[RMDB]
Structure probing data (2A3) for a 207-nucleotide construct.

RNA sequence: GGGAACGACUCGAGUAGAGUCGAAAACAGUUAGAAUGUGUGCACUCUGUUAGAAGAAAAAAGGUUUCCUCUGGGUGUAUGAAUUACUUUCAAGUAAGCCCGAAUGCCUUGACCUACAUGUCCCUCCAUCACACAACCACACCAAUAGUAUGCGCCACGCAUCUACAGGUUUCGACCUGUAGAUGCGAAAAGAAACAACAACAACAAC
Reactivity to 2A3 in 0.01 (KOAc 150mM, MgCl2 10mM, bicine 150mM(pH8.5), 24C), signal-to-noise 1, nucleotides 027 to 156: c030a030g040u110u060a110g090a230a160u100g060u030g020u000g080c060a010c030u000c030u030g060u030u120a120g060a280a060g030a030a040a010a050a000a070g070g000u030u000u040c030c000u030c030u080g010g000g040u090g050u140a060u090g080a100a030u030u040a170c070u190u160u140c040a110a100g000u050a030a040g030c060c000c000g000a150a130u210g000c000c000u000u070g000a030c010c030u070a060c040a100u170g010u070c000c000c020u000c050c020a070u000c000a000c010a000c030a080a100c040c000a010c010a000c050c000a000a060u100a000g120u040a020u090g090c020g010c210c220a030

Background
It was measured as part of the RMDB library OK3TST. 2A3 adducts were read by reverse transcription with SuperScript II with manganese.